[RMDB]
RNA sequence: GGGAACGACUCGAGUAGAGUCGAAAAUGGUUUUCCCUGCCUCCGCUCGCGGUCCGCUGGCAUUUGCCAGCAACCCGUCAAGCGUCAUAACAUAUACCACUUGCGGUAUAGCAACCAUCAAAGAUCGCCUAUAGUGUAACUUCGGUUACACUAUAGGAAAAGAAACAACAACAACAAC
Reactivity to DMS in 0.01 (KOAc 150mM, MgCl2 10mM, bicine 150mM(pH8.5), 24C), signal-to-noise 7, nucleotides 027 to 126: u010g000g000u000u010u000u010c000c000c000u000g010c060c060u000c140c030g000c020u000c200g030c030g000g010u010c120c300g010c000u000g000g000c000a300u010u010u010g010c000c000a000g000c010a050a060c300c010c010g010u010c070a040a040g020c010g010u000c090a040u000a100a080c140a080u000a020u000a010c000c000a140c250u000u010g010c120g020g020u000a010u000a030g000c110a040a040c020c010a070u000c210a070a100a100g020a090u000c110g010
Reactivity to 2A3 in 0.01 (KOAc 150mM, MgCl2 10mM, bicine 150mM(pH8.5), 24C), signal-to-noise 7, nucleotides 027 to 126: u030g010g000u030u010u030u060c010c000c000u010g030c000c020u060c040c010g010c010u020c040g010c020g000g000u030c040c060g000c000u000g000g000c030a100u140u140u300g000c010c000a000g000c000a000a000c010c000c000g070u070c060a050a010g000c010g050u050c030a060u110a190a020c040a060u050a010u010a040c010c010a060c100u130u290g060c110g010g000u010a010u020a030g010c000a010a040c020c010a030u100c120a080a090a050g080a100u120c080g010